Annotation
An RNA of 170 nucleotides, treated with 2A3 and DMS and read out base by base. The data come from the RNA Mapping Database (RMDB), library 15KLIB. For 2A3, 27,863 sequencing reads were counted. Conditions: 150 mM KOAc, 10 mM MgCl2 and 150 mM bicine (pH 8.5), 24 C.
[RMDB]
RNA sequence: GGGAACGACUCGAGUAGAGUCGAAAAGAGAAAUCACCUCCAGAGGACCCCUUCAGCGAACAGAGAGCGCUGCGAGCGAGGAGUAAGACCAUAGCGAUGGAAAGAGAUGCUAGGAGUAGGGAGAGACGACGGUUAAGCUUCGGCUUAACCAAAAGAAACAACAACAACAAC
Reactivity to 2A3 in 0.01 (KOAc 150mM, MgCl2 10mM, bicine 150mM(pH8.5), 24C), signal-to-noise 9, nucleotides 027 to 129: g070a000g020a010a090a050u090c040a080c030c000u040c020c020a010g020a060g060g020a100c010c010c000c000u020u090c030a020g010c000g030a050a030c050a060g080a010g020a020g120c030g000c040u060g030c040g030a020g010c030g020a030g010g000a010g010u050a060a030g010a030c010c030a070u090a030g040c050g080a060u100g030g020a050a050a010g040a010g000a010u110g040c030u040a020g010g020a020g020u060a040g010g010g010a030g000a000g000a030c070g010a020c080
Reactivity to DMS in 0.01 (KOAc 150mM, MgCl2 10mM, bicine 150mM(pH8.5), 24C), signal-to-noise 9, nucleotides 027 to 129: g020a080g000a040a060a040u060c070a100c080c010u010c060c050a050g040a010g000g050a120c070c050c020c050u030u040c070a080g020c000g030a070a070c100a050g040a040g050a060g040c080g030c030u010g010c200g020a040g000c010g010a080g000g040a060g020u010a060a060g020a110c040c030a110u030a060g050c070g000a100u030g010g010a050a070a080g000a070g000a070u040g030c060u010a060g020g020a060g000u000a050g000g020g010a040g010a080g020a010c110g000a080c100